[RMDB]
RNA sequence: GGGAACGACUCGAGUAGAGUCGAAAAUCCGUGCUGCUUGUUGGGGAACUUAGGUUCUCUCCUCUCCGAGGAGGUGUCGUGCGUGCGGGAGGCGACCAUAUUUUAUUGUUCCCUCCUGCUAUUAGGACUAUGAGUCUAUUUUCGAAUAGACUCAUAGAAAAGAAACAACAACAACAAC
Reactivity to DMS in 0.01 (KOAc 150mM, MgCl2 10mM, bicine 150mM(pH8.5), 24C), signal-to-noise 7, nucleotides 027 to 126: u010c010c010g030u010g010c040u010g000c110u000u000g010u000u000g010g000g000g000a030a020c040u010u020a110g020g010u000u000c010u010c000u000c020c010u000c020u010c140c140g000a070g000g010a040g010g010u000g000u000c050g010u000g020c110g020u010g010c020g010g000g000a030g010g010c170g000a020c030c050a040u010a060u030u020u020u030a080u030u000g000u000u000c140c000c000u000c010c000u000g010c030u000a020u010u020a100g000g010a270
Reactivity to 2A3 in 0.01 (KOAc 150mM, MgCl2 10mM, bicine 150mM(pH8.5), 24C), signal-to-noise 4, nucleotides 027 to 126: u010c010c010g010u070g010c020u060g000c010u050u130g010u040u060g050g020g000g070a020a010c020u040u050a150g130g000u050u020c030u000c010u010c010c000u030c000u020c040c080g030a060g010g050a030g000g030u020g030u050c020g010u010g080c040g020u040g000c000g000g030g000a000g010g000c080g010a010c030c000a020u030a100u110u140u070u080a150u050u070g010u060u050c000c000c000u010c010c010u010g040c010u050a100u120u220a080g040g010a010
An RNA of 177 nucleotides, treated with DMS and 2A3 and read out base by base. Reactivities are given for positions 27 through 126. Conditions: 150 mM KOAc, 10 mM MgCl2 and 150 mM bicine (pH 8.5), 24 C. The data come from the RNA Mapping Database (RMDB), libraries RFM100 and RFMREP.